[RMDB]
RNA sequence: GGGAACGACUCGAGUAGAGUCGAAAAAGUUGAAGCGUCCGCAUGUAGGAUCGCCACAAGGGAUUGUCUCAAUCCUUUGGGUUCAAAAGUAGAGACUCGGCUAAUCCAUCCUGACUGUCGGAUCGGUGCAGACUAAAAUUAAAGACAGAAACUAAACGGUGUGUUAAAGGUUCGCCUUUAACACACCAAAAGAAACAACAACAACAAC
Reactivity to 2A3 in 0.01 (KOAc 150mM, MgCl2 10mM, bicine 150mM(pH8.5), 24C), signal-to-noise 1, nucleotides 027 to 156: a000g130u110u090g010a070a060g030c020g050u000c010c000g000c130a080u150g150u150a050g010g020a100u090c060g000c000c000a090c010a010a000g000g020g010a000u020u030g100u050c000u020c100a000a040u030c000c010u010u000u040g010g000g000u020u120c060a120a110a040a000g090u210a100g010a000g000a030c000u020c070g020g040c010u020a030a030u000c000c010a010u010c000c010u040g060a010c000u030g010u060c000g000g000a000u010c020g000g060u000g000c040a010g020a120c000u080a000a000a060a060u090u060a010a000a000g000a000c000a000g010a140a080a050c110u110a000a000a080c150

This 207-nucleotide RNA was probed chemically with 2A3. Source: RMDB library RSTRND, as collected in RNAgym. The 2A3 profile rests on 733 reads.